[RMDB]
RNA sequence: GGGAACGACUCGAGUAGAGUCGAAAAAGAUCGAUUACGAUCGAUCAAUGAUGCCCCUCACCCACCUCUGAAGAUCCCAGGUGGGCGAGGGAACGGAGCACGGGGUCACGAGCAGUACGCUGCUCGAAAAAGAACUAGACCUUCGGGUCUAGUUCAACAGGUUAAUGUAGUUCGCUACAUUAACCUGAAAAGAAACAACAACAACAAC
Reactivity to 2A3 in 0.01 (KOAc 150mM, MgCl2 10mM, bicine 150mM(pH8.5), 24C), signal-to-noise 4, nucleotides 027 to 156: a000g010a000u010c010g000a000u070u080a090c230g050a020u000c000g000a000u010c010a020a070u180g080a060u190g120c020c010c000c000u000c000a010c010c000c000a000c000c010u030c070u130g080a110a030g030a090u050c030c030c010a000g000g000u000g000g000g000c000g000a010g010g000g000a030a030c070g070g040a050g060c080a050c140g000g000g000g020u010c020a010c060g010a000g000c000a000g010u040a020c170g020c140u010g010c000u000c000g010a010a000a000a000a000g010a000a000c000u000a000g000a000c010c000u010u040c120g010g000g000u000c000u000a000g000u000u000c000a000a000
Reactivity to DMS in 0.01 (KOAc 150mM, MgCl2 10mM, bicine 150mM(pH8.5), 24C), signal-to-noise 1, nucleotides 027 to 156: a200g010a030u000c000g020a030u000u010a210c100g040a120u000c010g080a010u010c000a170a060u030g020a110u010g000c050c000c010c020u000c000a010c000c000c000a010c060c000u050c070u010g010a100a170g000a080u000c010c000c010a040g000g010u020g030g020g030c020g020a010g000g000g000a000a000c080g000g000a180g020c090a090c070g020g000g080g020u010c010a270c040g010a060g020c020a040g010u010a130c210g080c010u000g060c000u000c000g000a020a030a110a100a100g000a020a010c000u000a020g010a020c010c010u000u000c200g070g020g020u010c010u010a020g000u000u000c000a040a210